[RMDB]
RNA sequence: GGGAACGACUCGAGUAGAGUCGAAAAAGCACGCCAUAUCGCCGAAAGGCACACUUAAUUAUUAAAGGUAAUACACUAUGUCCGGUAAAAUGACUGGUAUCGUAAAAUGGUUCAACGCUGACAAAGGAAUCAUAGAUCAUUUCGAUGAUCUAUGAUUAAAAGAAACAACAACAACAAC
Reactivity to 2A3 in 0.01 (KOAc 150mM, MgCl2 10mM, bicine 150mM(pH8.5), 24C), signal-to-noise 9, nucleotides 027 to 126: a000g040c030a020c040g010c010c000a050u060a060u130c070g000c030c000g050a060a030a010g030g060c020a010c000a000c020u100u130a100a150u150u190a130u080u180a160a060a020g060g000u040a060a050u070a100c050a020c060u050a030u130g070u010c020c000g020g010u060a070a120a090a110u160g080a030c010u010g000g010u020a020u060c000g010u020a020a070a050a070u070g010g020u040u050c030a050a040c050g000c040u020g020a040c050a050a090a020g170g020
Reactivity to DMS in 0.01 (KOAc 150mM, MgCl2 10mM, bicine 150mM(pH8.5), 24C), signal-to-noise 9, nucleotides 027 to 126: a050g010c030a080c110g000c020c020a060u010a090u020c120g020c010c000g010a080a100a120g010g010c030a090c160a050c090u000u010a080a090u010u010a090u020u020a060a070a100g010g010u010a060a060u010a080c090a060c080u010a050u010g000u010c030c120g010g010u010a040a050a080a090u020g000a040c030u000g010g000u000a030u000c110g010u010a030a050a070a050u000g010g010u000u010c090a050a080c100g010c030u000g000a070c110a050a060a110g000g000

Annotation: Chemical mapping of a 177-nucleotide RNA with 2A3 and DMS. For DMS the reverse transcriptase was MarathonRT. For 2A3 the reverse transcriptase was SuperScript II with manganese.